[RMDB]
RNA sequence: GGGAACGACUCGAGUAGAGUCGAAAAGACAAUAGCGUAGGGAACCAAGCAAAGAGGUAAGAUAUCCCACGGUAGAAGGCUUGGUUCUAGCCGUGGGAAGAAGAAGUCCCACUCCCUACGCCGAUAAGAUUUAUCCAUAGUUCGCUAUGGAUAAAUCAAAAGAAACAACAACAACAAC
Reactivity to DMS in 0.01 (KOAc 150mM, MgCl2 10mM, bicine 150mM(pH8.5), 24C), signal-to-noise 5, nucleotides 027 to 126: g000a100c140a100a100u000a070g000c000g010u000a010g010g010g010a030a060c010c010a020a040g000c040a120a110a150g020a100g020g000u010a060a100g000a140u010a100u000c010c000c000a020c010g000g010u000a030g000a040a020g000g010c030u000u010g000g010u000u010c220u000a050g020c010c000g020u000g000g000g010a010a020g000a070a080g010a080a100g000u010c000c000c010a300c050u000c000c000c000u000a010c010g000c010c070g000a080u000a090a070
Reactivity to 2A3 in 0.01 (KOAc 150mM, MgCl2 10mM, bicine 150mM(pH8.5), 24C), signal-to-noise 3, nucleotides 027 to 126: g100a010c070a030a220u050a120g000c000g010u000a000g000g000g000a000a040c000c000a010a010g010c020a040a120a100g230a130g070g000u140a160a050g020a100u090a030u090c010c000c010a000c010g000g010u080a100g040a120a010g050g010c020u010u020g040g000u060u010c040u030a010g000c020c000g000u000g000g000g020a000a000g020a010a000g010a020a000g040u020c010c000c000a000c020u000c000c010c010u000a010c000g000c000c010g030a020u030a120a080